[RMDB]
RNA sequence: GGGAACGACUCGAGUAGAGUCGAAAAGCCUAAGCGUUCGCGCUUAGGCAAAGAAAGCGAAAACGCAACGCCAACGGUAAGGCGAAUUCCGAACAACCAUAAAAAGUUGCCUCUUCGGAGGCAACAAUCGGAUUAAAAAGUUCGCUUUUUAAUCCGAAAAAGAAACAACAACAACAAC
Reactivity to 2A3 in 0.01 (KOAc 150mM, MgCl2 10mM, bicine 150mM(pH8.5), 24C), signal-to-noise 3, nucleotides 027 to 126: g000c000c000u000a010a000g000c020g020u060u170c240g000c000g000c110u000u000a010g010g000c000a000a000a010g000a030a040a020g020c040g060a160a100a060a120c040g000c020a020a020c010g000c000c010a060a010c070g010g030u140a060a040g010g000c040g030a160a040u070u000c010c000g010a050a020c030a030a020c010c040a040u210a090a140a010a010a010g000u000u000g000c000c010u000c010u030u050c200g080g000a000g000g000c000a000a000c000a000a000
Reactivity to DMS in 0.01 (KOAc 150mM, MgCl2 10mM, bicine 150mM(pH8.5), 24C), signal-to-noise 3, nucleotides 027 to 126: g010c010c000u010a010a010g000c000g030u000u010c220g040c000g000c000u010u000a000g010g020c000a000a000a050g000a080a090a110g010c040g000a070a050a090a120c030g010c030a140a150c040g000c020c000a070a130c150g020g000u040a030a080g010g010c010g010a070a160u010u000c010c000g000a110a060c160a060a060c050c040a080u000a070a080a080a090a060g010u000u010g010c010c000u000c000u000u020c190g020g000a000g000g000c000a000a000c000a020a030